[RMDB]
RNA sequence: GGGAACGACUCGAGUAGAGUCGAAAAAUGCACUGAUAGCUGAUGAGAUGCGGAAGAAAGAACACUAUAAAACCAUUACUGGUAGGACGGUGUCAAGUAGUAGCUUCACACUUAAUUCAAUUGCUACCAGCUCCUACGAAUUCGUUCGUAGGAGCUGAAAAGAAACAACAACAACAAC
Reactivity to 2A3 in 0.01 (KOAc 150mM, MgCl2 10mM, bicine 150mM(pH8.5), 24C), signal-to-noise 1, nucleotides 027 to 126: a000u060g000c000a000c060u060g010a130u060a060g060c070u040g010a140u090g010a100g050a040u100g050c090g050g030a070a000g120a070a130a020g090a090a020c040a010c060u080a040u100a300a050a030a040c000c000a010u020u140a200c130u040g010g000u010a010g010g100a000c060g000g000u000g000u030c010a020a050g020u000a020g010u020a040g040c000u020u110c010a010c000a000c020u070u130a100a060u240u050c050a050a100u110u090g000c000u020a070c010
Reactivity to DMS in 0.01 (KOAc 150mM, MgCl2 10mM, bicine 150mM(pH8.5), 24C), signal-to-noise 2, nucleotides 027 to 126: a110u010g010c010a140c130u000g010a060u000a070g010c010u000g010a060u000g000a100g000a020u000g030c090g010g010a090a080g010a090a120a050g000a080a010c040a020c020u000a160u000a080a050a110a060c050c050a030u010u020a120c200u000g000g000u000a020g000g010a120c210g000g020u010g000u000c030a050a060g000u000a090g010u010a060g000c050u010u000c150a110c060a050c050u010u000a050a100u000u000c110a020a130u000u020g000c010u000a050c100
An RNA of 177 nucleotides, treated with 2A3 and DMS and read out base by base. Source: RMDB library OK2TST, as collected in RNAgym. Conditions: 150 mM KOAc, 10 mM MgCl2 and 150 mM bicine (pH 8.5), 24 C. The 2A3 profile rests on 786 reads.